[RMDB]
RNA sequence: GGGAACGACUCGAGUAGAGUCGAAAAGGAGUCUAACAUGUGUGCAAGUGUUAGGGUGUGGAAACCCCAGCGCGAAAUGAAAGUGAAGGGCAGCGUAAGUUGUCUGAGGUAGGAAAUGCUGCGGGCUUGAUUCCAUAAAAUUCGUUUUAUGGAAUCAAAAAGAAACAACAACAACAAC
Reactivity to 2A3 in 0.01 (KOAc 150mM, MgCl2 10mM, bicine 150mM(pH8.5), 24C), signal-to-noise 9, nucleotides 027 to 126: g070g010a070g050u020c010u020a020a010c020a030u080g080u050g060u100g180c080a120a080g020u000g020u060u040a030g010g030g030u090g020u050g040g070a070a080a050c000c000c000c000a010g000c030g000c020g080a100a070a060u240g070a170a100a030g120u110g060a060a040g010g000g000c010a010g000c010g030u090a110a140g010u070u010g010u020c020u020g020a030g020g080u180a040g020g080a040a040a060u120g000c010u010g010c090g000g010g000c000u000
Reactivity to DMS in 0.01 (KOAc 150mM, MgCl2 10mM, bicine 150mM(pH8.5), 24C), signal-to-noise 9, nucleotides 027 to 126: g010g000a110g010u010c020u010a010a040c030a020u010g010u020g030u020g010c090a100a140g010u000g010u010u000a020g000g000g020u010g010u010g000g010a100a100a190c030c010c000c010a040g000c010g020c100g010a070a080a090u020g010a090a090a100g020u010g010a140a150g000g010g000c010a010g010c010g000u030a090a080g010u000u000g010u000c010u000g010a040g000g010u030a060g000g010a080a080a070u020g000c010u000g010c140g010g010g000c180u010